The record gives the reactivity of an RNA of 177 nucleotides to DMS and 2A3. The RNA was probed in 150 mM KOAc, 10 mM MgCl2 and 150 mM bicine (pH 8.5) at 24 C.
[RMDB]
RNA sequence: GGGAACGACUCGAGUAGAGUCGAAAACUAGGAUCGUUCGCGAUCCUAGAAAGGCGCGGCACCGUCCGCGGAACAAACGGCAAAACUAGAAAGUCAGCAUAAAAAUCAUCAGCUUCGGCUGAUGAAAGUCUAAAACUAACUUCGGUUAGUUUUAGACAAAAGAAACAACAACAACAAC
Reactivity to DMS in 0.01 (KOAc 150mM, MgCl2 10mM, bicine 150mM(pH8.5), 24C), signal-to-noise 3, nucleotides 027 to 126: c000u000a000g010g000a010u000c010g020u010u020c280g010c000g010a010u000c000c010u000a000g010a020a090a080g000g020c020g010c020g010g010c010a300c020c030g020u010c010c010g000c010g010g010a050a200c150a010a000a000c010g010g000c110a050a050a080a080c140u000a070g000a060a090a120g000u000c060a050g000c090a080u000a010a110a070a090a150u000c000a010u000c000a000g000c010u000u010c190g010g010c000u000g000a010u000g000a010a030a060
Reactivity to 2A3 in 0.01 (KOAc 150mM, MgCl2 10mM, bicine 150mM(pH8.5), 24C), signal-to-noise 4, nucleotides 027 to 126: c010u000a000g010g020a010u010c010g020u090u060c130g010c010g110a000u000c000c000u010a000g000a020a010a010g080g040c010g000c010g010g000c030a020c080c010g170u190c000c000g000c000g000g010a010a000c000a000a020a010c000g010g030c030a050a070a000a080c070u100a070g180a120a110a020g090u110c050a030g020c060a140u180a170a180a040a030a040u010c000a000u000c000a010g020c000u060u100c190g130g000c000u010g030a000u000g000a000a000a000